[RMDB]
RNA sequence: GGGAACGACUCGAGUAGAGUCGAAAAGUCAUGGGAGCCGAGGGUGCCCGAAGCCGCCACGAUUCAGUGGUGUCCACGGCAAGAUCGGUGACUGGGACGAAGUCGUAACAAGGUAGCCGUAGGAGAACUAUUGCCCAAGGUUCGCCUUGGGCAAUAGAAAAGAAACAACAACAACAAC
Reactivity to DMS in 0.01 (KOAc 150mM, MgCl2 10mM, bicine 150mM(pH8.5), 24C), signal-to-noise 1, nucleotides 027 to 126: g000u000c010a030u000g000g000g030a300g000c000c000g000a020g010g000g080u000g020c030c000c020g000a150a180g000c060c000g020c000c000a000c030g000a180u010u010c230a140g050u020g000g000u000g010u000c000c010a300c300g000g010c020a020a030g010a160u000c000g020g000u000g020a300c000u020g000g000g000a080c000g020a090a050g000u000c020g030u030a070a140c100a090a040g010g000u030a070g020c020c030g000u000a020g000g010a110g000a060a200

Record summary:
Source: RMDB library RFMREP, as collected in RNAgym. Structure probing data (DMS) for a 177-nucleotide construct. Reactivities are given for positions 27 through 126. The RNA was probed in 150 mM KOAc, 10 mM MgCl2 and 150 mM bicine (pH 8.5) at 24 C. For DMS, 565 sequencing reads were counted.